[RMDB]
RNA sequence: GGGAACGACUCGAGUAGAGUCGAAAAGCGGCGUGGCCCACAAGCCAUGGCGCGUCGCAGAGCUGGAGGAACGUUUCAGGGGCCACCCGGCGAACCGGGACAGCUAUGUCCGCUUCGCCGAAGCGCAAGGCCCAGUGAUGUUCGCAUCACUGGGCCUAAAAGAAACAACAACAACAAC
Reactivity to DMS in 0.01 (KOAc 150mM, MgCl2 10mM, bicine 150mM(pH8.5), 24C), signal-to-noise 1, nucleotides 027 to 126: g020c000g030g020c030g050u000g010g060c000c010c080a120c300a120a230g000c010c050a020u000g000g060c000g000c000g000u000c020g000c100a060g010a200g030c050u030g000g030a020g010g030a060a140c050g000u000u010u000c030a120g030g000g000g010c010c060a060c030c040c000g020g000c000g000a000a030c000c000g020g030g020a030c000a050g030c260u000a140u000g040u010c000c000g010c300u000u000c020g010c000c000g000a010a080g030c100g000c080a100
The record gives the reactivity of an RNA of 177 nucleotides to DMS. It was measured as part of the RMDB library OK2TST.